[RMDB]
RNA sequence: GGGAACGACUCGAGUAGAGUCGAAAAGGUCUCCUCCCAGGUCCGGAAUCAGUCUCCAUGGCUUCCAUCCUGGGCCUCUUCUUCGGGGGCCCUCCCUCUUCGUUCCUCUUCUUUGAUCUCAACAUUCCAAACCGAGAGUUCGCUCUCGGUAAAAGAAACAACAACAACAAC
Reactivity to 2A3 in 0.01 (KOAc 150mM, MgCl2 10mM, bicine 150mM(pH8.5), 24C), signal-to-noise 9, nucleotides 027 to 129: g040g020u020c010u010c020c000u040c010c010c000a000g020g020u030c050c100g010g040a040a060u120c040a050g050u020c040u070c140c090a140u250g030g000c020u040u010c020c020a050u040c000c010u040g000g000g010c010c010u060c010u150u040c020u090u110c050g020g000g000g000g000c000c000c000u010c000c000c000u010c020u030u030c010g040u020u020c000c000u030c000u080u020c010u050u070u110g080a090u010c020u010c050a050a140c030a130u110u070c030c010a080a040
Reactivity to DMS in 0.01 (KOAc 150mM, MgCl2 10mM, bicine 150mM(pH8.5), 24C), signal-to-noise 6, nucleotides 027 to 129: g000g040u030c000u020c040c000u030c050c000c050a080g020g050u040c000c090g000g000a030a040u060c160a000g040u020c060u050c120c120a130u090g030g030c000u020u040c020c000a050u030c030c040u030g000g000g000c050c000u040c050u070u060c080u060u000c100g000g020g010g020g030c000c000c000u000c020c010c010u030c030u000u000c010g040u000u000c030c000u000c050u050u020c030u030u060u070g020a050u040c040u030c000a110a110c150a140u070u030c040c020a010a130